RNA sequence: GGGAACGACUCGAGUAGAGUCGAAAAUGUAAGCCAGUGGAUCAUUAAAUGUCACAAGUGAGUUAUGAGUUGCAGGGAUUUAGUGAUGAGGGAAAUCAGCUGAGGACCUCACAUUUAACUUUGAGGAUAGGGAUGAUUUUUUUCCCCCCCGGAACUACGUAUUAUACUGGUUCGCCAGUAUAAUACGAAAAGAAACAACAACAACAAC
Reactivity to 2A3 in 0.01 (KOAc 150mM, MgCl2 10mM, bicine 150mM(pH8.5), 24C), signal-to-noise 3, nucleotides 027 to 156: u080g010u050a050a040g000c040c020a000g010u010g040g010a020u050c010a010u100u170a080a170a090u170g050u120c070a010c030a140a020g090u000g050a070g040u110u120a030u130g040a020g030u090u080g020c020a010g040g020g010a020u010u070u110a020g020u020g070a190u030g010a070g030g030g040a000a040a040u060c010a010g110c060u130g000a040g020g030a030c000c010u010c000a010c010a020u130u180u040a070a040c030u060u030u120g030a020g030g000a010u060a040g040g020g000a010u000g030a060u100u030u020u000u020u070u110c020c000c010c000c010c010c020g000g000a040a010c040u060a000
Reactivity to DMS in 0.01 (KOAc 150mM, MgCl2 10mM, bicine 150mM(pH8.5), 24C), signal-to-noise 2, nucleotides 027 to 156: u010g010u000a070a090g030c030c010a070g020u020g030g010a090u020c040a140u020u000a040a090a090u020g010u010c040a090c090a020a100g030u010g010a100g010u010u000a050u040g000a120g010u000u000g030c010a060g010g020g010a080u020u000u010a120g030u010g010a100u010g010a080g030g010g000a020a080a100u010c030a080g000c070u010g150a130g010g010a210c060c000u000c000a010c110a110u000u010u000a060a100c060u000u000u000g000a100g040g020a150u000a130g020g020g030a050u000g000a010u000u000u000u000u000u000u000c040c000c020c000c020c040c020g020g000a050a050c030u010a080